Source: RMDB library OK2TST, as collected in RNAgym. This 177-nucleotide RNA was probed chemically with DMS and 2A3. High DMS reactivity at an A or C suggests that its Watson-Crick edge is free. Values cover nucleotides 27 to 126. For 2A3, 5,127 sequencing reads were counted. The RNA was probed in 150 mM KOAc, 10 mM MgCl2 and 150 mM bicine (pH 8.5) at 24 C.
RNA sequence: GGGAACGACUCGAGUAGAGUCGAAAAAAUUAUACAAUAUUGCACAAGCUGUCAAUCUUCCAGUCAACGUCUUGGCGAAGAUCAAGUAGUCGAUUGUGCCAACUUUACAUGUCUACUACGGCAGACAAGUCCUUUUAUGAUUCGUCAUAAAAGGACUAAAAGAAACAACAACAACAAC
Reactivity to DMS in 0.01 (KOAc 150mM, MgCl2 10mM, bicine 150mM(pH8.5), 24C), signal-to-noise 6, nucleotides 027 to 126: a060a060u020u020a090u020a120c050a080a130u010a120u020u000g010c030a020c030a050a070g010c030u010g000u000c080a150a050u000c010u000u000c030c110a110g030u000c020a030a050c300g020u010c150u010u010g010g020c030g010a030a030g010a030u000c080a060a110g020u000a040g010u000c090g010a090u000u000g030u000g030c050c240a060a080c120u000u000u010a080c200a140u000g030u000c010u000a020c040u000a080c150g050g010c040a010g000a030c070a060
Reactivity to 2A3 in 0.01 (KOAc 150mM, MgCl2 10mM, bicine 150mM(pH8.5), 24C), signal-to-noise 5, nucleotides 027 to 126: a000a000u300u240a150u090a100c040a050a120u100a170u230u170g000c000a000c010a040a020g020c020u020g030u200c020a020a030u000c020u020u000c030c080a040g020u000c000a060a030c130g150u040c090u160u040g010g000c020g010a010a000g000a010u030c050a130a070g010u010a000g020u040c040g140a150u000u050g000u000g030c040c010a040a020c030u110u130u160a070c050a090u100g000u020c010u020a050c010u020a030c070g060g020c000a000g020a030c010a010